An RNA of 177 nucleotides, treated with 2A3 and DMS and read out base by base.
The DMS profile rests on 1,505 reads.
It was measured as part of the RMDB library OK2TST.
The RNA was probed in 150 mM KOAc, 10 mM MgCl2 and 150 mM bicine (pH 8.5) at 24 C.
For 2A3 the reverse transcriptase was SuperScript II with manganese.
[RMDB]
RNA sequence: GGGAACGACUCGAGUAGAGUCGAAAAAUCUACAUUUUCGAGCACAAUUACCGUUGCUCCGUAUUAUAAUUAAAACACCUUUUCGCUCAUUUCGACAUGGGAAAAGACGAUAUUAAACCGGUCACAGAAGAAAUGGUUAGUUCGCUAACCAUUUCUUAAAAGAAACAACAACAACAAC
Reactivity to 2A3 in 0.01 (KOAc 150mM, MgCl2 10mM, bicine 150mM(pH8.5), 24C), signal-to-noise 2, nucleotides 027 to 126: a020u050c030u060a120c010a130u070u090u110u160c010g020a000g000c000a000c020a090a200u180u120a210c130c130g040u050u050g010c010u000c070c000g020u040a060u080u110a080u090a120a120u100u150a040a100a050a000c030a070c020c000u000u050u100u000c110g100c090u100c050a040u050u090u160c130g010a040c020a070u000g040g070g000a010a030a000a030g020a060c010g030a030u030a030u200u170a140a070a020c060c000g000g020u040c080a020c010a130g210
Reactivity to DMS in 0.01 (KOAc 150mM, MgCl2 10mM, bicine 150mM(pH8.5), 24C), signal-to-noise 3, nucleotides 027 to 126: a040u010c040u010a080c070a100u000u000u010u020c040g030a050g020c010a050c060a100a150u000u010a150c160c110g010u010u000g010c020u000c010c090g010u000a040u000u000a050u000a070a090u010u010a010a070a040a130c170a100c080c000u000u000u000u000c060g020c040u010c030a080u010u020u000c130g000a070c150a040u000g000g000g000a030a030a050a080g000a040c080g010a090u000a050u010u000a080a080a140c080c010g010g010u000c100a060c200a140g010

Reactivities are given for positions 27 through 126.